[RMDB]
RNA sequence: GGGAACGACUCGAGUAGAGUCGAAAAAUACAAGCUUGCAAUCUGCAUUGCGCAACGUAAAGGCUGGUCAGUUGGCACUGUGCCGUUGGCUAUAUGCAUAAACACAUCAAACGGAACAAUAUCUUUUGUUAGGUUAUCAACUGAUUGUGUUGAAACCCAGUGCUAUUCCAUUCGUGGAAUAGCACUGAAAAGAAACAACAACAACAAC
Reactivity to 2A3 in 0.01 (KOAc 150mM, MgCl2 10mM, bicine 150mM(pH8.5), 24C), signal-to-noise 9, nucleotides 027 to 156: a000u210a040c060a040a040g050c050u140u100g020c030a040a130u050c050u110g050c050a080u040u180g000c100g010c040a030a060c050g060u140a110a080a110g110g000c040u040g050g010u040c040a040g050u130u220g060g010c050a020c180u120g090u160g080c030c000g010u010u030g020g000c000u040a040u030a000u260g000c010a020u160a110a130a010c060a010c010a110u120c090a130a090a040c060g060g020a050a050c030a070a080u080a090u200c050u050u110u040u020g100u100u090a030g000g050u040u040a210u250c000a000a010c010u040g060a280u150u110g080u050g000u040u010g010a030a010a010c010c000
Reactivity to DMS in 0.01 (KOAc 150mM, MgCl2 10mM, bicine 150mM(pH8.5), 24C), signal-to-noise 2, nucleotides 027 to 156: a110u000a130c060a070a140g030c050u010u010g010c000a070a070u010c030u010g000c100a150u010u000g000c010g030c040a090a020c110g010u010a060a110a140g020g020c050u010g000g000u000c090a120g010u000u000g030g010c130a080c100u010g020u010g010c000c010g030u010u000g000g000c110u010a070u000a020u000g030c010a190u000a100a090a110c030a000c040a010u000c040a020a050a060c020g020g000a030a030c030a050a080u010a150u000c020u000u000u000u000g000u000u000a040g030g010u000u000a120u000c010a020a040c020u000g010a150u000u020g000u030g020u000u000g010a090a050a030c040c010